Annotation:
Conditions: 150 mM KOAc, 10 mM MgCl2 and 150 mM bicine (pH 8.5), 24 C. This 207-nucleotide RNA was probed chemically with 2A3. 2A3 adducts were read by reverse transcription with SuperScript II with manganese. Source: RMDB library M2RFPK, as collected in RNAgym. The 2A3 profile rests on 1,714 reads.

[RMDB]
RNA sequence: GGGAACGACUCGAGUAGAGUCGAAAAUGGGCGAUCGCUCGCUGUUUUUGUGGCUGGCUUUCAGCGGGCUGGAGGAGCCGGGAGCGGAGGCGGAGGACCCAGCCAAAAACGUCAGCCGAGGCCGGGCAAUAUCGUGGACUGUUCGCAGUCCACGAAACUGUAGUCUACGAUUCGUCGUAGACUACAGAAAAGAAACAACAACAACAAC
Reactivity to 2A3 in 0.01 (KOAc 150mM, MgCl2 10mM, bicine 150mM(pH8.5), 24C), signal-to-noise 2, nucleotides 027 to 156: u070g020g000g010c060g060a080u110c080g020c020u010c010g000c000u020g070u030u090u020u090u170g100u040g020g010c010u000g000g040c050u000u090u050c040a030g000c000g050g000g000c020u030g000g050a070g030g030a040g020c050c010g020g040g010a080g040c070g010g060a030g000g040c060g020g030a050g000g020a050c000c000c010a000g000c010c000a100a010a000a000a070c040g000u020c010a010g000c000c000g020a050g020g000c040c040g020g010g000c010a050a080u070a070u080c000g000u000g000g000a000c000u010g030u080u060c160g020c160a000g000u010c000c000a000c000g000a000a000a000